The data come from the RNA Mapping Database (RMDB), library OK2TRN. An RNA of 177 nucleotides, treated with DMS and 2A3 and read out base by base. Values cover nucleotides 27 to 126. For 2A3, 2,331 sequencing reads were counted. Conditions: 150 mM KOAc, 10 mM MgCl2 and 150 mM bicine (pH 8.5), 24 C.
[RMDB]
RNA sequence: GGGAACGACUCGAGUAGAGUCGAAAAUGAAUCAGUCCUGAGGGUAGACACUGUUAUUCUCUUCAGUUUAGGAAUGAUGUGAUACUGAGGCUUAGGUUUAGUAAUUUGCCUAAGGACACACAGCUAGACACCGUAGAUCAUUCGUGAUCUACGGUGUAAAAGAAACAACAACAACAAC
Reactivity to DMS in 0.01 (KOAc 150mM, MgCl2 10mM, bicine 150mM(pH8.5), 24C), signal-to-noise 4, nucleotides 027 to 126: u000g020a150a070u000c090a060g010u000c020c000u000g010a120g030g030g010u000a040g020a110c130a070c060u010g010u010u010a060u000u010c030u000c030u010u000c090a080g020u010u000u000a110g010g000a070a040u000g000a060u010g010u010g010a140u010a120c030u000g040a090g020g000c040u010u000a020g010g010u000u020u000a050g010u010a080a160u010u000u000g000c000c000u010a090a030g000g000a070c080a060c100a070c050a050g000c130u000a080g010
Reactivity to 2A3 in 0.01 (KOAc 150mM, MgCl2 10mM, bicine 150mM(pH8.5), 24C), signal-to-noise 3, nucleotides 027 to 126: u140g100a030a080u080c030a030g040u000c000c010u030g040a170g050g090g030u060a020g020a060c020a020c130u060g040u100u060a100u060u020c070u000c000u130u100c100a190g050u040u070u290a050g000g050a060a050u050g050a040u060g090u050g060a020u050a130c000u040g010a020g140g000c040u040u050a010g020g030u100u170u050a040g020u050a070a220u030u050u090g000c000c000u010a010a000g060g010a000c030a010c000a010c010a030g070c060u070a040g020